[RMDB]
RNA sequence: GGGAACGACUCGAGUAGAGUCGAAAAGCCCACGGGCUCCGGGACGCAUCACCAAACGGUGGUCAGCCCGAAAGUCUCGCUUCGGCAAACACACGACACGGUAGGGGAGCGGCGAGUAGGCCGCAAGGUACGGAGAUCCAUUCGUGGAUCUCCGUACAAAAGAAACAACAACAACAAC
Reactivity to 2A3 in 0.01 (KOAc 150mM, MgCl2 10mM, bicine 150mM(pH8.5), 24C), signal-to-noise 3, nucleotides 027 to 126: g050c000c000c020a010c010g010g010g000c000u000c010c030g000g000g000a030c020g010c070a010u020c000a010c000c000a200a250a080c120g000g000u000g020g000u000c000a020g010c000c000c000g040a000a000a020g020u000c040u020c090g060c010u050u030c000g020g000c060a030a120a000c030a020c030a010c100g060a010c030a010c080g050g030u070a040g020g020g020g020a060g010c020g030g000c000g010a040g130u170a110g160g080c000c010g060c020a020a010g080
Reactivity to DMS in 0.01 (KOAc 150mM, MgCl2 10mM, bicine 150mM(pH8.5), 24C), signal-to-noise 1, nucleotides 027 to 126: g000c000c010c030a180c130g000g010g000c000u020c160c010g030g000g020a000c070g100c150a000u000c040a040c090c020a100a150a160c190g040g070u000g000g000u010c030a280g000c000c010c000g000a030a100a050g020u000c000u010c090g010c080u000u030c030g080g000c030a030a110a000c160a210c010a020c070g000a050c110a050c010g000g000u000a030g000g000g000g000a110g030c000g020g000c000g000a070g000u040a180g030g000c010c020g020c010a010a040g000